[RMDB]
RNA sequence: GGGAACGACUCGAGUAGAGUCGAAAAUCAUAAGUUGAGUCUCCAAUCUUCAAAUAUGGAUAAAGAUACUUGGCAGUGGGGCCUUCAGGGUUAUCAGCUUGAAUCAUUGAUUGGUGUCUCAGAGGGCAUACCUUAUCGUCUUCGGACGAUAAGGUAUAAAAGAAACAACAACAACAAC
Reactivity to 2A3 in 0.01 (KOAc 150mM, MgCl2 10mM, bicine 150mM(pH8.5), 24C), signal-to-noise 2, nucleotides 027 to 126: u060c020a050u080a210a000g030u030u010g020a000g000u000c010u000c040c010a040a020u050c020u170u190c070a020a140a120u210a150u140g040g030a080u130a130a120a010g020a020u080a160c020u030u040g060g020c010a080g030u060g050g130g060g000c040c030u130u120c100a100g130g030g000u070u100a080u170c010a010g070c020u050u110g010a030a060u100c040a100u080u050g050a020u000u040g050g000u010g080u000c000u000c020a000g020a020g040g020g010c070
Reactivity to DMS in 0.01 (KOAc 150mM, MgCl2 10mM, bicine 150mM(pH8.5), 24C), signal-to-noise 2, nucleotides 027 to 126: u020c070a150u000a090a080g010u020u010g010a040g010u010c020u000c010c020a040a030u000c030u000u000c100a060a080a090u010a100u010g010g020a060u000a050a090a110g020a080u000a070c050u010u010g010g010c030a110g010u010g000g000g000g010c080c030u000u010c090a060g000g010g010u000u000a070u010c070a070g020c040u010u010g000a050a070u010c080a060u000u010g000a050u010u000g010g010u000g000u000c000u000c010a040g000a110g020g010g030c190